An RNA of 207 nucleotides, treated with DMS and 2A3 and read out base by base. DMS adducts were read by reverse transcription with MarathonRT. The 2A3 profile rests on 5,836 reads. Conditions: 150 mM KOAc, 10 mM MgCl2 and 150 mM bicine (pH 8.5), 24 C.
[RMDB]
RNA sequence: GGGAACGACUCGAGUAGAGUCGAAAAAGGCAGGUGCCAGUUGUGAGGAAGUAGGAGCCCCAGGUGACUGUGGGGUUCCAGCCCUCAUGACUAGAAGUCUGCUUAUGCCAGUCAAAGAAACAAGGAAGGCAGAAAGACUACUCUUGUGGGGAGACAAUCGGUACUAAUUAUUCGUAAUUAGUACCGAAAAAGAAACAACAACAACAAC
Reactivity to DMS in 0.01 (KOAc 150mM, MgCl2 10mM, bicine 150mM(pH8.5), 24C), signal-to-noise 2, nucleotides 027 to 156: a090g000g010c010a060g020g030u000g000c050c020a050g030u000u000g030u000g010a050g010g020a070a080g030u000a230g010g010a060g020c000c000c000c000a070g050g030u010g010a160c180u020g010u000g040g020g020g000u010u000c000c020a090g020c100c020c010u000c010a020u000g000a030c000u010a020g010a040a120g010u000c010u000g000c030u000u020a090u000g000c060c060a190g020u010c100a110a100a280g010a100a050a040c030a030a030g040g010a040a100g000g040c010a050g000a020a000a020g010a050c010u000a010c090u000c080u010u000g020u000g030g010g000g010a110g010a080c090a070a230
Reactivity to 2A3 in 0.01 (KOAc 150mM, MgCl2 10mM, bicine 150mM(pH8.5), 24C), signal-to-noise 5, nucleotides 027 to 156: a000g020g000c010a010g010g000u050g070c060c020a000g000u000u010g010u010g010a010g030g020a140a100g050u170a230g040g000a010g010c000c000c000c000a030g070g100u170g130a100c100u110g040u040g100g000g000g000u010u020c000c010a030g100c000c010c010u000c000a000u010g000a000c000u020a070g020a040a000g030u000c010u000g010c000u020u020a070u100g050c010c010a020g040u100c010a010a090a100g030a010a030a010c000a000a000g040g000a000a000g000g000c000a000g000a000a000a000g010a000c010u030a030c010u050c020u060u070g030u090g060g060g030g010a030g080a020c030a000a090